Chemical mapping of a 207-nucleotide RNA with DMS and 2A3. The DMS profile rests on 8,674 reads. Reactivities are rounded to 0.1 and cut off at 0 and 3. It was measured as part of the RMDB library OK3TST. For 2A3, 7,785 sequencing reads were counted.

[RMDB]
RNA sequence: GGGAACGACUCGAGUAGAGUCGAAAAACAUCUCACUGGGAAGUGAGAUGUGAGUCCGCAUGGGAAUGCGGACGGUCGAUUAGACAUUUAUCGUAUAUGUCUAGAGGAGAACGAGAUGUACGGGAGUAGAUCGAGUUCUGCUCGCAGAAUACGCAGCGUGUAGACGUGUAUUCGUACACGUCUGCACAAAAGAAACAACAACAACAAC
Reactivity to DMS in 0.01 (KOAc 150mM, MgCl2 10mM, bicine 150mM(pH8.5), 24C), signal-to-noise 3, nucleotides 027 to 156: a020c000a010u000c000u000c000a010c010u000g040g020g000a300a040g030u000g020a010g030a000u000g000u000g010a050g010u000c000c000g000c000a020u000g040g000g000a270a080u000g000c000g020g010a000c010g000g000u000c050g000a130u010u000a070g010a090c040a050u000u000u000a130u010c080g010u000a060u010a050u000g000u000c030u000a060g000a080g000g010a080g000a030a040c020g010a300g000a050u000g020u000a050c000g010g020g000a300g000u000a050g000a040u000c000g010a300g020u000u000c010u000g020c010u000c000g000c050a060g010a280a070u000a020c000g030c090a180g020c130
Reactivity to 2A3 in 0.01 (KOAc 150mM, MgCl2 10mM, bicine 150mM(pH8.5), 24C), signal-to-noise 4, nucleotides 027 to 156: a000c000a000u000c000u000c000a010c010u000g020g020g090a060a000g000u000g000a000g000a000u000g000u010g000a010g000u000c000c000g000c000a010u020g070g010g080a100a050u010g000c000g010g000a000c000g000g020u040c010g040a090u040u080a030g020a010c020a030u040u060u070a120u060c010g000u010a010u000a000u050g030u000c040u030a030g000a000g020g020a000g000a000a000c000g000a000g000a040u020g010u100a010c010g030g040g050a080g010u000a010g000a030u000c010g000a000g010u000u000c000u010g050c000u000c000g000c010a010g030a050a020u040a010c040g030c070a050g050c030